[RMDB]
Source information: Chemical mapping of a 177-nucleotide RNA with 2A3. The data come from the RNA Mapping Database (RMDB), library RFM100. The reactions ran in a buffer of 150 mM KOAc, 10 mM MgCl2 and 150 mM bicine (pH 8.5), at 24 C. 2A3 adducts were read by reverse transcription with SuperScript II with manganese.
RNA sequence: GGGAACGACUCGAGUAGAGUCGAAAAACUCAGGACGUACGCGUCCUGAGACUAUGGCUUUGGACUGUGAGGUGACUCUUGGUGUGUGAUGGCUUUUCAGCAAGGUCCUCCUCACAGUAGCUAUAAAGUCGCCAUUGAUCUUCGGAUCAAUGGCGACAAAAGAAACAACAACAACAAC
Reactivity to 2A3 in 0.01 (KOAc 150mM, MgCl2 10mM, bicine 150mM(pH8.5), 24C), signal-to-noise 2, nucleotides 027 to 126: a000c000u010c000a020g000g000a000c000g000u150a020c230g030c000g080u000c000c000u000g000a000g000a000c000u080a160u000g000g030c000u030u040u170g180g020a000c000u000g000u010g000a000g000g000u000g000a000c020u000c000u300u000g200g010u000g040u020g000u030g260a140u140g050g140c040u240u060u020u020c000a000g010c000a000a000g020g000u000c000c030u070c000c000u020c080a000c000a000g000u000a000g060c000u000a000u100a020a090a000